[RMDB]
RNA sequence: GGGAACGACUCGAGUAGAGUCGAAAAUCUGGAGCCCCAGAGGGUGGAGGUGCAGGACUUCCAGGAGCGUCCGUCGCACUCCACCCGAGGGCGAGCACCUCAGUGGCCGCAGUGGGUGGAUGCAUGCCCUACAACGAGUGUUCGCACUCGUUGUAGGAAAAGAAACAACAACAACAAC
Reactivity to DMS in 0.01 (KOAc 150mM, MgCl2 10mM, bicine 150mM(pH8.5), 24C), signal-to-noise 3, nucleotides 027 to 126: u000c020u020g000g000a270g030c030c020c000c060a090g020a280g010g010g040u000g000g000a010g010g000u000g050c020a190g000g010a020c020u000u020c110c080a150g000g000a070g030c300g000u000c000c000g000u010c240g000c010a020c020u000c000c000a010c020c000c020g000a060g010g010g020c040g010a070g020c060a090c050c040u000c060a070g010u010g000g010c030c070g000c050a070g020u000g010g010g020u000g010g000a090u000g020c050a070u010g020c120
Reactivity to 2A3 in 0.01 (KOAc 150mM, MgCl2 10mM, bicine 150mM(pH8.5), 24C), signal-to-noise 1, nucleotides 027 to 126: u000c030u000g050g090a020g060c010c010c040c050a040g060a070g130g040g020u000g000g010a060g050g110u080g010c040a040g030g000a000c010u160u000c110c110a070g100g100a050g020c090g010u040c020c030g080u100c090g000c020a010c020u000c010c020a020c000c000c000g000a000g000g000g000c010g000a010g000c000a040c000c020u110c020a070g060u090g110g000c010c000g000c040a060g040u050g000g080g000u040g020g030a050u050g010c050a050u120g020c000